Chemical mapping of a 207-nucleotide RNA with DMS and 2A3. The reactions ran in a buffer of 150 mM KOAc, 10 mM MgCl2 and 150 mM bicine (pH 8.5), at 24 C. The DMS profile rests on 2,182 reads. Values are in units of 0.01, from 0 to 300, in steps of 10. 2A3 adducts were read by reverse transcription with SuperScript II with manganese. It was measured as part of the RMDB library OK3TST. For DMS the reverse transcriptase was MarathonRT.
RNA sequence: GGGAACGACUCGAGUAGAGUCGAAAAUCUAGCGAUGACUUUAGGACAGGGUCUCAAACUCGUAAACGGGGCUCUGACAAUGCAAUUGGAUGAUUCCCUGAACAUAUCUGCUUUGGGAUUGGGAAUAAACACGCAUGCGCCGAUCACCGUAGGCGUGAUACGCAUAACGUUUCGACGUUAUGCGUAUAAAAGAAACAACAACAACAAC
Reactivity to DMS in 0.01 (KOAc 150mM, MgCl2 10mM, bicine 150mM(pH8.5), 24C), signal-to-noise 1, nucleotides 027 to 156: u010c020u000a120g010c010g000a090u040g000a030c020u010u000u020a070g010g000a170c010a090g020g000g060u010c000u000c080a080a090a090c130u010c120g000u000a030a080a190c160g000g000g050g020c060u000c000u020g020a040c060a070a060u020g020c060a110a180u010u020g000g030a130u000g020a150u000u020c010c010c010u000g010a170a080c010a090u000a080u000c120u000g020c100u020u010u000g000g010g010a120u010u000g010g020g010a040a150u000a020a020a090c040a040c020g000c010a050u010g000c010g050c020c000g010a050u020c080a090c300c010g070u000a040g010g010c000g020u010g000
Reactivity to 2A3 in 0.01 (KOAc 150mM, MgCl2 10mM, bicine 150mM(pH8.5), 24C), signal-to-noise 3, nucleotides 027 to 156: u010c020u010a020g040c000g110a090u070g070a210c070u070u090u180a130g000g100a040c000a000g000g000g040u010c010u000c040a100a150a090c090u090c130g190u220a030a010a160c090g000g000g000g000c010u010c000u010g010a020c010a010a080u120g050c040a060a230u090u060g030g020a020u040g010a050u040u010c010c000c000u010g070a050a000c020a010u110a040u080c050u060g090c030u090u110u110g090g030g000a050u100u050g010g000g060a020a060u130a050a120a000c060a000c050g040c020a010u090g050c000g000c030c060g060a100u120c020a020c120c010g000u050a010g020g020c000g000u020g000